[RMDB]
RNA sequence: GGGAACGACUCGAGUAGAGUCGAAAAGUCGUGGCUGCGGAUGCCCUUCGCGAUCCUUGGUCUUUAUUUGUGAGACUCUCUAAUGUAGGUAUUAAAGAUGGUUUCCAUCCUUUGACCUUAGAGGUCGGAAGAACUUACAUUUCGAUGUAAGUUCUUCAAAAGAAACAACAACAACAAC
Reactivity to 2A3 in 0.01 (KOAc 150mM, MgCl2 10mM, bicine 150mM(pH8.5), 24C), signal-to-noise 9, nucleotides 027 to 126: g090u070c040g070u080g060g000c030u050g020c050g070g010a040u150g030c000c020c000u040u050c060g030c040g050a070u040c020c010u030u070g030g010u020c010u020u230u050a290u080u140u090g140u070g050a090g000a030c010u040c000u000c010u220a050a070u210g140u210a110g030g010u080a110u110u180a110a040a010g020a010u020g000g050u080u120u110c030c000a010u030c030c010u030u030u070g020a020c000c000u000u010a030g010a020g020g000u030c010g010
Reactivity to DMS in 0.01 (KOAc 150mM, MgCl2 10mM, bicine 150mM(pH8.5), 24C), signal-to-noise 5, nucleotides 027 to 126: g010u010c050g020u020g000g000c050u010g020c050g010g000a080u010g000c020c030c020u010u010c050g020c040g000a060u000c040c020u000u010g000g010u020c020u010u010u010a090u020u010u010g020u020g010a130g020a020c010u040c020u000c010u010a020a100u020g020u050a040g000g000u040a060u020u010a030a050a050g010a030u000g000g010u040u020u050c020c010a020u010c060c030u000u010u000g000a020c000c010u000u010a020g000a030g010g010u000c020g010
An RNA of 177 nucleotides, treated with 2A3 and DMS and read out base by base. The 2A3 profile rests on 13,422 reads.